[RMDB]
RNA sequence: GGGAACGACUCGAGUAGAGUCGAAAAUAAAAGGACGAGGAGAAAUAUAGCGCGAGAUCGGUCCUCCCACGCGCGUCUCGCGCUGAUAAGCGGAAUAAGAGGAUGAUUAAUAGAUAGCGCGCAAAAAGCGUAAGAUAGGGUUCGCCCUAUCUUACGCAAAAGAAACAACAACAACAAC
Reactivity to DMS in 0.01 (KOAc 150mM, MgCl2 10mM, bicine 150mM(pH8.5), 24C), signal-to-noise 1, nucleotides 027 to 126: u010a050a040a110a070g000g000a030c020g000a090g000g000a070g000a100a090a060u000a060u000a040g010c000g020c000g020a040g060a020u000c060g020g010u000c050c060u000c010c030c010a080c050g010c050g010c040g000u000c040u000c010g010c000g010c000u000g010a020u000a050a120g010c050g000g000a100a070u000a080a130g010a060g000g000a040u000g000a050u000u000a120a130u000a080g000a050u000a020g010c010g070c020g010c180a060a080a100a040a110
Reactivity to 2A3 in 0.01 (KOAc 150mM, MgCl2 10mM, bicine 150mM(pH8.5), 24C), signal-to-noise 1, nucleotides 027 to 126: u160a040a090a000a010g040g000a000c030g000a000g110g070a040g120a070a180a000u210a030u080a090g000c000g000c010g010a010g000a020u080c040g070g030u010c000c000u040c000c000c020a030c040g020c010g000c010g070u050c010u060c010g010c000g000c000u010g000a000u010a030a050g010c000g030g060a030a080u060a120a060g020a030g060g010a000u020g010a010u190u120a150a080u070a070g010a030u060a020g010c000g000c010g000c030a000a000a000a150a040